The record gives the reactivity of an RNA of 177 nucleotides to DMS and 2A3. The RNA was probed in 150 mM KOAc, 10 mM MgCl2 and 150 mM bicine (pH 8.5) at 24 C. The data come from the RNA Mapping Database (RMDB), library TTRDEL. For DMS the reverse transcriptase was MarathonRT. For 2A3 the reverse transcriptase was SuperScript II with manganese. Values are in units of 0.01, from 0 to 300, in steps of 10.

[RMDB]
RNA sequence: GGGAACGACUCGAGUAGAGUCGAAAAGAUAUGGAAUCCAUGAAACUGUUCAGGCGUUGAAAUCGGAAACGAUGGAGCCUGACAGGAGUAUGUGGAUUCCUAAGUCAAAGAGACGUUCGCGUCUCAAUCAGAUUGAAUAGUUCGCUAUUCAAUCUGAAAAAGAAACAACAACAACAAC
Reactivity to DMS in 0.01 (KOAc 150mM, MgCl2 10mM, bicine 150mM(pH8.5), 24C), signal-to-noise 6, nucleotides 027 to 126: g000a040u010a300u000g000g000a010a000u000c000c000a000u000g010a190a170a180c000u000g010u010u010c000a000g010g010c010g010u010u020g010a100a130a030u000c000g010g000a140a090a190c000g000a020u000g010g010a110g000c010c000u000g000a000c000a000g010g010a060g010u000a040u010g010u000g000g010a010u000u000c000c000u000a010a060g010u000c020a100a110a180g000a010g010a020c000g020u000u010c240g020c020g020u000c000u000c010a080a120
Reactivity to 2A3 in 0.01 (KOAc 150mM, MgCl2 10mM, bicine 150mM(pH8.5), 24C), signal-to-noise 5, nucleotides 027 to 126: g000a020u070a030u130g000g010a000a000u010c010c000a000u030g010a010a010a010c020u050g080u300u120c040a000g010g000c030g300u300u050g010a040a030a000u000c000g000g030a070a040a040c000g010a000u010g020g020a010g020c000c010u000g000a000c000a000g000g010a000g000u020a040u300g010u000g000g010a000u000u000c000c000u000a020a010g010u000c030a060a110a120g010a000g000a000c010g010u070u080c300g070c020g120u000c000u000c000a000a070